RNA sequence: GGGAACGACUCGAGUAGAGUCGAAAAUGAUUACUGGAGCAGUUGACAUGAAGACAAGCAAAUGGGUCUGGGACCCACGAAUCAUCUGAAGAACAGCGUCAGUUGGUUACGUCAUUGCAGUUGCCAAGAUGCUUUAGCUCUUCGGAGCUAAAGCAUCAAAAGAAACAACAACAACAAC
Reactivity to DMS in 0.01 (KOAc 150mM, MgCl2 10mM, bicine 150mM(pH8.5), 24C), signal-to-noise 2, nucleotides 027 to 126: u010g010a120u000u000a050c100u000g000g010a070g010c060a060g010u010u010g000a070c070a080u000g000a100a100g000a020c060a040a110g030c110a040a130a100u000g000g000g020u010c020u010g070g020g010a050c010c000c010a020c020g010a050a080u000c030a020u000c020u010g000a050a070g030a110a100c230a130g020c130g010u000c030a020g000u000u010g000g000u000u000a070c090g000u000c100a070u000u020g020c030a030g020u000u010g010c000c030a050a100
Reactivity to 2A3 in 0.01 (KOAc 150mM, MgCl2 10mM, bicine 150mM(pH8.5), 24C), signal-to-noise 2, nucleotides 027 to 126: u130g030a040u140u120a110c040u080g020g060a040g060c030a040g000u040u020g080a110c020a050u070g040a060a070g060a020c020a060a040g090c000a000a100a060u030g020g000g000u010c080u180g100g170g020a020c010c000c000a000c000g030a010a010u040c010a000u030c000u020g040a040a020g050a150a020c010a090g080c060g210u000c010a030g000u030u030g010g020u040u040a040c040g010u000c050a060u050u160g000c000a030g010u020u030g000c000c000a000a040